[RMDB]
RNA sequence: GGGAACGACUCGAGUAGAGUCGAAAACAACGCCUCCGGCUAGUGACGUGUAUAUAUAUACAGGUUCCUUUUCAUUCAGCUUCCGGAUCUCGCUAGUCGUUAUUACGUCUUGUGGCUUGAAAAAUAAAUAGUACGAGGUAUUCGUACCUCGUACUAUAAAAGAAACAACAACAACAAC
Reactivity to 2A3 in 0.01 (KOAc 150mM, MgCl2 10mM, bicine 150mM(pH8.5), 24C), signal-to-noise 5, nucleotides 027 to 126: c030a020a040c070g030c010c000u050c010c010g020g000c030u030a020g040u010g070a040c100g050u020g050u070a010u020a020u000a020u010a000u020a110c020a030g100g000u060u080c000c000u050u090u080u120c080a100u100u070c030a030g050c060u070u050c040c020g060g010a070u040c040u010c040g010c030u010a000g000u010c010g050u010u030a080u100u160a060c090g030u020c040u060u070g030u050g030g010c030u020u120g090a070a040a010a010a000u230a040a160
Reactivity to DMS in 0.01 (KOAc 150mM, MgCl2 10mM, bicine 150mM(pH8.5), 24C), signal-to-noise 3, nucleotides 027 to 126: c150a070a090c190g010c040c000u020c070c040g000g010c050u000a060g000u000g010a010c240g000u000g000u000a010u000a120u020a070u080a050u010a000c020a080g010g000u010u000c030c000u000u010u020u020c080a080u000u000c060a080g010c030u000u020c000c040g000g000a030u010c070u000c010g000c010u000a030g010u000c020g010u020u020a030u000u030a090c170g000u000c010u020u000g010u020g010g000c030u000u020g010a010a070a100a100a050u020a100a050
An RNA of 177 nucleotides, treated with 2A3 and DMS and read out base by base. Values cover nucleotides 27 to 126. As a SHAPE reagent, 2A3 marks flexible, mostly unpaired nucleotides at the ribose 2'-OH. 2A3 adducts were read by reverse transcription with SuperScript II with manganese.